[RMDB]
RNA sequence: GGGAACGACUCGAGUAGAGUCGAAAAGGGAAUGGUGGUUUACCCCGUUAUCAAAUGAUUACCGACCAAAAAUUGGCGAAACUCGUUUCGCGUUGGCUGCCUAAUUCAAGGAAUUAGCGUGCCUUCAAAGACAUCAAGAAGUUCGCUUCUUGAUGAAUCCAGUAUGAAAGUUCGCUUUCAUACUGGAAAAAGAAACAACAACAACAAC
Reactivity to 2A3 in 0.01 (KOAc 150mM, MgCl2 10mM, bicine 150mM(pH8.5), 24C), signal-to-noise 3, nucleotides 027 to 156: g030g000g000a110a090u140g010g020u030g010g030u060u070u150a090c010c010c000c010g090u100u080a090u170c070a110a090a090u130g030a010u090u050a010c010c020g060a090c070c080a090a060a000a000a040u170u170g040g000c010g010a040a020a040c050u060c100g030u010u010u000c010g000c010g000u020u000g010g000c030u060g030c030c010u000a000a000u010u010c100a160a090g190g000a100a020u000u000a010g020c040g050u010g010c000c000u000u000c050a100a070a010g050a010c010a000u000c000a000a000g000a000a010g000u030u060c120g020c230u000u000c000u000u000g000a000u000g000a000a010
Reactivity to DMS in 0.01 (KOAc 150mM, MgCl2 10mM, bicine 150mM(pH8.5), 24C), signal-to-noise 3, nucleotides 027 to 156: g010g000g000a070a050u000g010g050u000g000g010u000u000u020a110c030c000c020c000g020u010u010a110u000c090a090a110a100u000g000a150u000u000a090c010c010g010a110c010c030a050a070a070a060a180u010u010g010g040c000g000a120a070a040c040u000c090g020u000u000u000c020g000c040g030u010u000g010g000c040u000g000c140c010u000a010a040u000u000c010a170a150g030g000a060a060u000u000a030g020c050g020u000g010c000c030u000u000c040a060a060a140g010a190c010a000u000c010a020a020g020a030a030g010u010u010c300g030c010u010u000c000u020u010g000a010u000g000a050a070

Notes:
Source: RMDB library M2RFPK, as collected in RNAgym. This 207-nucleotide RNA was probed chemically with 2A3 and DMS. Reactivities are given for positions 27 through 156. For 2A3 the reverse transcriptase was SuperScript II with manganese. The RNA was probed in 150 mM KOAc, 10 mM MgCl2 and 150 mM bicine (pH 8.5) at 24 C. For DMS the reverse transcriptase was MarathonRT.